[RMDB]
RNA sequence: GGGAACGACUCGAGUAGAGUCGAAAACGGGUUCGCGACGGGUUGGCUCAUCCUGAGAUCGGGGAGCCUCGACGAUCUCUUUGAUCUCCUGAAGGAGGAAGGAGCUCUCGAGCGCUCUCCCGCCCCUAACGUUAGCUGUUCGCAGCUAACAAAAGAAACAACAACAACAAC
Reactivity to 2A3 in 0.01 (KOAc 150mM, MgCl2 10mM, bicine 150mM(pH8.5), 24C), signal-to-noise 9, nucleotides 027 to 129: c020g010g000g010u040u030c020g010c020g060a040c030g010g000g030u050u050g040g000c000u020c030a080u050c010c030u110g060a080g020a150u140c030g000g000g000g000a000g000c020c010u000c000g020a030c140g010a020u000c010u010c000u020u020u060g200a200u040c000u020c000c020u170g160a230a140g020g000a010g010g010a010a010g010g000a000g000c010u000c000u000c010g000a000g000c130g010c010u000c040u040c000c000c010g010c000c000c000c000u050a090a050c080
Reactivity to DMS in 0.01 (KOAc 150mM, MgCl2 10mM, bicine 150mM(pH8.5), 24C), signal-to-noise 8, nucleotides 027 to 129: c080g050g030g020u030u020c090g030c010g030a130c080g020g010g030u030u030g030g000c070u000c060a110u030c030c030u050g040a120g000a100u050c000g030g020g030g010a000g000c000c030u020c020g000a000c210g030a030u000c010u000c050u010u010u010g010a120u010c010u000c010c020u000g060a240a150g060g010a020g000g000a030a010g010g000a010g000c100u000c010u010c000g020a030g010c160g040c040u030c030u070c010c000c020g010c030c000c000c040u000a110a090c190
Description:
The data come from the RNA Mapping Database (RMDB), library 15KLIB. This 170-nucleotide RNA was probed chemically with 2A3 and DMS. The reactions ran in a buffer of 150 mM KOAc, 10 mM MgCl2 and 150 mM bicine (pH 8.5), at 24 C. The DMS profile rests on 53,559 reads. Reactivities are rounded to 0.1 and cut off at 0 and 3. DMS adducts were read by reverse transcription with MarathonRT.